Annotation: Chemical mapping of a 207-nucleotide RNA with 2A3 and DMS. For DMS the reverse transcriptase was MarathonRT. The RNA was probed in 150 mM KOAc, 10 mM MgCl2 and 150 mM bicine (pH 8.5) at 24 C. 2A3 adducts were read by reverse transcription with SuperScript II with manganese. The DMS profile rests on 5,812 reads.
[RMDB]
RNA sequence: GGGAACGACUCGAGUAGAGUCGAAAAUAGCGAAGUAGGAUUUUAUGCGUCAAGUGUUCACAGGCUGGGGAGUCGCCGUGAAACGAAAAGCAGAAAGCGUGCUGCUUACGAUAUAGUUUCCGCACCCAUAAGAAGUCUCUGUUCGCAGAGACUUCAACAUUACGUUUGUGUUCGCACAAACGUAAUGAAAAGAAACAACAACAACAAC
Reactivity to 2A3 in 0.01 (KOAc 150mM, MgCl2 10mM, bicine 150mM(pH8.5), 24C), signal-to-noise 6, nucleotides 027 to 156: u130a020g020c030g030a070a010g050u100a070g020g060a060u040u070u030u060a060u150g030c020g010u040c070a070a050g030u050g060u210u030c020a020c060a100g000g040c050u080g020g030g010g020a060g060u080c030g010c030c020g030u060g010a020a010a000c020g020a070a060a000a000g000c010a000g060a070a110a020g110c100g080u120g050c010u000g000c000u030u040a040c010g020a020u020a010u010a120g010u010u010u000c010c010g000c030a050c020c010c010a040u080a110a080g000a000a000g000u000c000u000c000u010g050u060u060c170g000c060a000g000a000g000a000c010u000u000c000a000a000
Reactivity to DMS in 0.01 (KOAc 150mM, MgCl2 10mM, bicine 150mM(pH8.5), 24C), signal-to-noise 3, nucleotides 027 to 156: u010a050g000c020g020a050a100g010u000a080g000g010a080u000u000u000u000a060u010g010c050g020u000c020a060a250g030u010g010u000u000c030a050c050a120g010g000c000u010g000g020g010g020a080g030u000c040g020c030c020g020u010g010a050a030a050c030g010a060a050a040a060g000c040a040g000a040a040a070g020c090g030u000g020c000u000g000c010u000u000a070c040g000a120u010a110u000a110g020u000u000u000c010c010g010c040a150c030c010c020a170u000a050a130g020a020a020g010u000c000u000c000u000g000u000u000c300g030c020a020g020a030g000a030c000u000u000c000a030a070